[RMDB]
RNA sequence: GGGAACGACUCGAGUAGAGUCGAAAAUAGUCGGAAUUCGUUCCGACUAGAUGAACGCUGCAAGCGGGAGCGCGCUCAAAAGAGCACGCAAAAGCAACGCAAAAAUGAACUUAUUCGUAAGUUCAAACAAUGAGUCAGUGUUCGCACUGACUCAUUGAAAAGAAACAACAACAACAAC
Reactivity to DMS in 0.01 (KOAc 150mM, MgCl2 10mM, bicine 150mM(pH8.5), 24C), signal-to-noise 3, nucleotides 027 to 126: u000a000g010u000c010g000g000a010a050u000u010c200g000u000u030c000c000g000a010c000u000a000g010a130u020g010a160a080c090g010c080u010g000c040a070a300g030c060g000g020g010a300g000c000g000c010g010c000u010c000a070a070a090a140g020a030g000c000a000c000g040c010a020a070a130a110g000c020a050a070c160g010c010a000a070a050a120a120u000g000a010a010c010u000u000a010u000u010c160g010u000a010a000g010u000u000c000a110a070a140
Reactivity to 2A3 in 0.01 (KOAc 150mM, MgCl2 10mM, bicine 150mM(pH8.5), 24C), signal-to-noise 2, nucleotides 027 to 126: u020a000g000u000c000g000g050a020a040u090u020c200g060u080u000c000c000g010a010c010u000a000g000a020u090g050a080a060c070g000c120u060g020c060a100a120g000c040g030g030g010a050g000c020g000c000g000c000u010c000a300a300a060a030g020a000g000c010a010c030g020c000a060a030a010a000g000c020a070a040c090g010c010a060a110a030a000a010u050g000a000a010c010u030u010a010u060u040c190g040u030a010a010g010u000u030c020a020a030a020